Chemical mapping of a 177-nucleotide RNA with DMS and 2A3. The DMS profile rests on 6,331 reads. It was measured as part of the RMDB library OK2TRN. The reactions ran in a buffer of 150 mM KOAc, 10 mM MgCl2 and 150 mM bicine (pH 8.5), at 24 C. In probing experiments dimethyl sulfate is read out at A N1 and C N3, which are open when not base-paired. For 2A3 the reverse transcriptase was SuperScript II with manganese.

[RMDB]
RNA sequence: GGGAACGACUCGAGUAGAGUCGAAAAAAGCUCUGUGAGAGAUUGAUCAAAGAGAGAAAUCUGAUCAUCACUAGAGGUAUAAGCAUCUAUCGUACCACCGCAUAUACAACUGAUAGCAUAAUUAAUGCUUAUCUUACUGGUUCGCCAGUAAGAUAAGAAAAGAAACAACAACAACAAC
Reactivity to DMS in 0.01 (KOAc 150mM, MgCl2 10mM, bicine 150mM(pH8.5), 24C), signal-to-noise 6, nucleotides 027 to 126: a130a100g010c020u000c010u000g000u000g010a090g000a110g010a050u000u000g010a100u000c020a060a100a120g020a120g010a120g010a100a090a070u010c020u010g000a050u000c050a070u000c020a040c040u010a040g000a040g010g010u010a050u000a060a090g000c070a040u000c060u000a070u000c070g010u000a080c060c020a080c090c060g010c100a050u000a090u010a060c110a060a090c110u010g000a050u010a040g010c100a040u010a060a080u010u010a070a070u000g000
Reactivity to 2A3 in 0.01 (KOAc 150mM, MgCl2 10mM, bicine 150mM(pH8.5), 24C), signal-to-noise 7, nucleotides 027 to 126: a000a010g050c010u000c010u010g030u020g030a060g010a010g020a100u070u140g000a020u030c070a110a270a040g200a040g010a010g050a090a060a040u010c020u040g030a060u040c020a010u000c010a020c050u100a030g000a030g060g050u120a120u020a140a010g020c020a030u030c020u090a060u070c030g030u030a040c020c020a030c030c030g000c060a040u120a010u040a160c090a120a040c080u090g040a080u070a030g020c030a040u070a150a050u220u090a110a050u160g020